[RMDB]
RNA sequence: GGGAACGACUCGAGUAGAGUCGAAAACUGCAGCAACGAAUCUUCCGCAAUGGGCGCAAGCCUGACGGAGCAAUGCCGCGUGCGGGAUGAAGCGUCUUGACGUGUAAACCGCUGUCAGGGGGUCGAAACUUCGUGCUUCGUUCGCGAAGCACGAAGUAAAAGAAACAACAACAACAAC
Reactivity to 2A3 in 0.01 (KOAc 150mM, MgCl2 10mM, bicine 150mM(pH8.5), 24C), signal-to-noise 2, nucleotides 027 to 126: c010u030g020c000a000g000c000a110a050c030g080a080a090u040c030u060u040c000c020g000c080a000a110u170g010g010g000c040g010c020a090a080g000c000c010u000g050a020c020g000g000a020g000c070a080a050u150g000c000c000g060c060g040u160g000c000g000g020g000a000u300g010a010a000g030c000g130u000c020u110u230g050a020c020g030u000g000u010a010a010a010c000c000g010c030u010g090u050c080a050g000g100g000g000g070u000c010g020a130a000
Reactivity to DMS in 0.01 (KOAc 150mM, MgCl2 10mM, bicine 150mM(pH8.5), 24C), signal-to-noise 2, nucleotides 027 to 126: c000u000g000c030a070g000c020a010a040c120g040a060a300u000c020u000u000c000c000g180c300a000a060u030g060g030g030c030g050c170a060a140g040c000c000u010g000a130c060g010g000a060g020c060a050a280u000g000c050c010g000c020g100u000g010c030g140g000g000a070u020g000a200a290g000c000g000u000c000u000u040g000a000c030g030u030g120u000a010a300a150c040c010g030c000u000g000u000c190a130g000g000g000g000g000u000c000g010a070a100